[RMDB]
RNA sequence: GGGAACGACUCGAGUAGAGUCGAAAAGUCUAUUGCGCCUGAUUUAUCUCUCGAUUUCGAGAAGUUAAAUGUUACUUUGCUGGACCUGACGUAUGAGAUGAACAGGAUUCAGGAUGCAAUUAAGAAGUUAAAUGAGAGCUACAUCAACCUCAAGGAACCAUGUAAUCCACUUCGGUGGAUUACAUGGAAAAGAAACAACAACAACAAC
Reactivity to 2A3 in 0.01 (KOAc 150mM, MgCl2 10mM, bicine 150mM(pH8.5), 24C), signal-to-noise 4, nucleotides 027 to 156: g020u030c040u060a040u030u120g030c030g000c000c020u030g020a050u060u020u100a060u000c020u000c010u010c060g150a160u120u130u100c090g050a100g030a080a040g030u070u160a070a060a050u120g030u070u020a070c080u110u140u080g050c040u060g010g030a060c000c010u020g020a020c020g070u110a090u250g070a070g010a030u110g020a080a020c020a030g060g030a060u120u020c010a000g040g030a100u100g010c000a010a000u050u020a040a010g040a010a000g050u070u210a070a070a070u050g030a030g000a000g030c050u080a020c010a070u070c020a040a070c020c000u050c020a020a030g050g010a020a050
Reactivity to DMS in 0.01 (KOAc 150mM, MgCl2 10mM, bicine 150mM(pH8.5), 24C), signal-to-noise 2, nucleotides 027 to 156: g030u010c030u000a040u000u000g000c040g020c000c010u000g020a120u000u000u000a060u010c010u000c000u000c020g000a300u000u010u000c050g010a070g040a080a120g010u000u000a060a090a090u000g020u000u000a070c040u010u000u000g020c040u000g010g020a060c080c020u020g000a130c090g010u010a110u030g000a140g000a030u010g000a080a090c030a080g000g010a300u000u000c040a110g010g030a050u010g010c010a080a120u010u000a080a080g000a120a120g010u000u010a050a030a170u000g000a060g010a140g030c010u000a080c060a060u000c040a090a070c030c040u010c020a070a080g000g010a070a180
An RNA of 207 nucleotides, treated with 2A3 and DMS and read out base by base. DMS (dimethyl sulfate) methylates the pairing face of unpaired adenines and cytosines. The reactions ran in a buffer of 150 mM KOAc, 10 mM MgCl2 and 150 mM bicine (pH 8.5), at 24 C. The 2A3 profile rests on 2,095 reads. The DMS profile rests on 3,322 reads. 2A3 is a SHAPE reagent: it acylates the 2'-hydroxyl of flexible nucleotides of all four kinds.